[RMDB]
This 207-nucleotide RNA was probed chemically with 2A3.
For 2A3 the reverse transcriptase was SuperScript II with manganese.

RNA sequence: GGGAACGACUCGAGUAGAGUCGAAAAAGGCGCGGUGGCUCACACCUAUAAUCCCAGCACUUUGGGAGGCCGAGGUGGGAGGAUCAGGAGGUCGAGAUGGAGACCAUCAUGGCCAACACGGUGAAGCCCCGUCUCUACUAAAAAUACAAAAAUUAGACGUUUUAAUGAGUUUCGACUCAUUAAAACGAAAAGAAACAACAACAACAAC
Reactivity to 2A3 in 0.01 (KOAc 150mM, MgCl2 10mM, bicine 150mM(pH8.5), 24C), signal-to-noise 1, nucleotides 027 to 156: a000g050g000c050g000c080g030g080u230g020g040c010u000c040a160c040a040c030c050u080a070u040a190a030u030c010c020c000a020g010c060a040c080u070u060u000g010g000g000a020g080g010c000c020g010a020g000g030u010g010g000g000a050g000g020a020u030c040a050g060g020a040g050g030u080c070g020a010g000a140u100g090g040a040g030a090c040c000a000u020c000a000u070g010g020c030c010a050a000c090a020c040g030g000u010g020a030a020g000c000c030c000c010g020u000c000u000c000u020a050c030u190a180a060a010a030a030u130a050c050a010a100a000a070a030u200u210a180g040a140
The data come from the RNA Mapping Database (RMDB), library OK3TST.